[RMDB]
RNA sequence: GGGAACGACUCGAGUAGAGUCGAAAAGAAUGGAGCAGGAGAGCUAAGAAAAAGAAUCCACACGCCUACCUAAGAAAAAGAAUGCUCUCCUGCUCCUAAGAAAAGAAUGGUAGGCGUGUGGUAAGAAGGGAAUUAUCUAGUUCGCUAGAUAAUUCCCAAAAGAAACAACAACAACAAC
Reactivity to 2A3 in 0.01 (KOAc 150mM, MgCl2 10mM, bicine 150mM(pH8.5), 24C), signal-to-noise 3, nucleotides 027 to 126: g080a010a100u160g000g000a020g000c000a000g040g010a000g020a000g000c060u150a080a040g170a100a140a000a000a000g240a130a080u080c000c030a000c000a000c000g000c000c000u000a000c010c000u140a110a080g140a180a120a010a000a000g200a070a050u110g000c000u010c000u000c000c000u000g000c000u000c000c000u000a000a000g000a000a010a000a000g180a010a020u140g030g000u020a000g000g000c000g000u000g010u000g000g000u000a000a000g010a050a100
The record gives the reactivity of an RNA of 177 nucleotides to 2A3.
For 2A3, 2,652 sequencing reads were counted.
2A3 adducts were read by reverse transcription with SuperScript II with manganese.
The RNA was probed in 150 mM KOAc, 10 mM MgCl2 and 150 mM bicine (pH 8.5) at 24 C.
It was measured as part of the RMDB library OK1LIB.